[RMDB]
RNA sequence: GGGAACGACUCGAGUAGAGUCGAAAAUUGUUGCUCCUAGCUUCGCUAGAUUCCGCUUGACACCAAUCCUAGGUGCAUAGUGUCUACGUGCUGCCGCUUUGCGGCCAACGGCAUUUUGCUGUUGGAUAACCUAAAUAAAAUUCGUUUUAUUUAGGUUAAAAGAAACAACAACAACAAC
Reactivity to 2A3 in 0.01 (KOAc 150mM, MgCl2 10mM, bicine 150mM(pH8.5), 24C), signal-to-noise 9, nucleotides 027 to 126: u080u070g050u040u070g020c020u020c010c010u020a040g020c030u110u080c040g010c050u020a040g010a150u060u030c030c010g020c040u010u030g030a040c000a010c010c010a030a070u110c020c020u070a070g010g090u070g030c010a040u040a060g050u040g030u030c030u040a040c040g050u060g030c050u070g020c010c010g020c110u090u100u300g030c020g010g000c000c010a010a000c000g000g000c010a030u040u060u060u300g000c010u020g000u010u000g010g000a010u030
Reactivity to DMS in 0.01 (KOAc 150mM, MgCl2 10mM, bicine 150mM(pH8.5), 24C), signal-to-noise 9, nucleotides 027 to 126: u010u010g000u000u000g000c060u010c030c010u000a080g010c040u010u010c080g020c110u000a050g000a130u000u010c140c060g020c070u000u000g010a140c040a020c020c020a060a120u010c080c060u000a070g010g010u010g000c040a040u000a060g010u000g000u000c030u010a060c110g010u010g010c060u010g010c010c020g010c030u010u010u010g020c030g020g000c000c020a000a010c010g010g010c000a130u010u010u010u010g010c000u000g010u000u000g000g000a150u000